[RMDB]
RNA sequence: GGGAACGACUCGAGUAGAGUCGAAAAGCGUUUAUGAGCUACAUGAACGAAGAGCAUACUUAGUCAAAGUAUGCAGAAGCCUUCUGUAGCUCAGAGGGCAGGACUAAUCAUUGACUAUGAUUAGGGACAGCCAGGACCUAUUCGUAGGUCCUGGCUGAAAAGAAACAACAACAACAAC
Reactivity to DMS in 0.01 (KOAc 150mM, MgCl2 10mM, bicine 150mM(pH8.5), 24C), signal-to-noise 1, nucleotides 027 to 126: g010c060g010u000u010u000a160u000g000a010g000c000u000a000c000a010u000g000a020a000c060g000a040a050g040a300g020c000a010u000a000c000u000u000a140g010u000c290a020a080a030g000u000a000u000g000c000a040g010a080a160g000c040c050u000u000c000u000g020u000a010g000c000u000c000a010g000a080g000g000g000c000a150g010g000a110c010u000a020a000u000c010a010u000u020g020a140c250u000a150u010g000a010u000u000a010g000g000g010a150

Chemical mapping of a 177-nucleotide RNA with DMS. The DMS profile rests on 1,014 reads. Conditions: 150 mM KOAc, 10 mM MgCl2 and 150 mM bicine (pH 8.5), 24 C.